[RMDB]
The record gives the reactivity of an RNA of 177 nucleotides to DMS and 2A3.
RNA sequence: GGGAACGACUCGAGUAGAGUCGAAAAUUCUGAAGGGCUACAAAUCGUUGGAGGCCACCCGCGCGGUGGACACCGUCGUCUUCGACAAGACCGGCACCCUGACGACGGGCCGGCUGCAGGUCAGUGCCGGCCAAGUAGUGUUCGCACUACUUGGCCGAAAAGAAACAACAACAACAAC
Reactivity to DMS in 0.01 (KOAc 150mM, MgCl2 10mM, bicine 150mM(pH8.5), 24C), signal-to-noise 3, nucleotides 027 to 126: u010u000c020u000g020a100a120g000g000g000c040u010a090c100a080a100a060u000c110g020u000u000g010g010a080g000g010c000c020a030c030c010c040g010c240g020c130g030g020u010g000g000a040c130a100c010c010g000u010c030g000u000c010u000u000c100g000a100c160a040a060g020a090c040c030g010g000c040a120c050c040c030u000g010a050c030g000a050c060g000g010g010c080c050g000g010c020u000g030c040a060g000g010u010c070a090g000u000g020c070
Reactivity to 2A3 in 0.01 (KOAc 150mM, MgCl2 10mM, bicine 150mM(pH8.5), 24C), signal-to-noise 2, nucleotides 027 to 126: u070u010c010u060g080a170a100g090g040g000c000u070a030c080a100a130a200u170c110g050u050u070g100g000a040g130g000c030c000a020c020c000c000g170c010g000c160g030g040u020g010g000a050c040a020c070c020g080u050c010g010u020c020u090u170c050g110a090c020a130a050g020a050c030c010g000g010c020a090c010c020c010u030g040a030c010g000a010c000g000g000g060c020c010g050g020c020u050g000c010a030g060g060u050c020a000g010u010g080c020
2A3 adducts were read by reverse transcription with SuperScript II with manganese.